[RMDB]
RNA sequence: GGGAACGACUCGAGUAGAGUCGAAAACAACGUUUCGACGUUGGUGUACGCGUACUACUGAGUAACAAGGAGCCAAGGGAGAUCUCCCAAAUAGGAGAUCAUCGAUCUUGGAACUACUCCCGCCCUCAGUAUCGCUUCGAACCUCAUUCGUGAGGAACCCCAGAAUAACAUUCGUGUUAUUCUGGGGAAAAGAAACAACAACAACAAC
Reactivity to DMS in 0.01 (KOAc 150mM, MgCl2 10mM, bicine 150mM(pH8.5), 24C), signal-to-noise 3, nucleotides 027 to 156: c020a030a020c010g000u000u000u000c120g030a140c010g010u000u010g010g000u000g020u000a080c120g010c020g040u000a100c100u010a030c010u010g000a060g020u020a050a120c070a100a040g020g020a060g010c020c020a030a020g030g000g000a110g000a020u000c000u000c000c000c020a030a100a180u000a040g000g010a020g010a020u000c000a110u010c170g000a040u000c010u000u000g000g020a050a040c080u010a300c010u000c010c010c010g000c300c120c010u000c010a040g000u000a040u000c040g020c020u000u000c020g000a100a100c000c010u000c010a120u000u000c210g030u000g000a020g010g000a060a090
Reactivity to 2A3 in 0.01 (KOAc 150mM, MgCl2 10mM, bicine 150mM(pH8.5), 24C), signal-to-noise 6, nucleotides 027 to 156: c000a000a000c010g020u030u120u240c260g130a050c000g000u010u030g050g070u090g070u090a070c130g020c010g020u060a110c000u010a010c000u010g010a010g060u170a200a170c110a140a080g000g010a000g010c000c000a010a000g030g010g000a030g010a020u000c000u030c010c030c020a140a220a030u260a090g010g010a010g000a010u010c020a070u230c030g060a050u020c010u000u000g020g010a020a000c040u170a050c000u030c000c000c000g030c030c000c010u010c000a000g000u010a020u300c010g000c000u060u070c050g070a060a080c000c010u020c000a030u090u130c200g170u050g030a000g000g040a070a060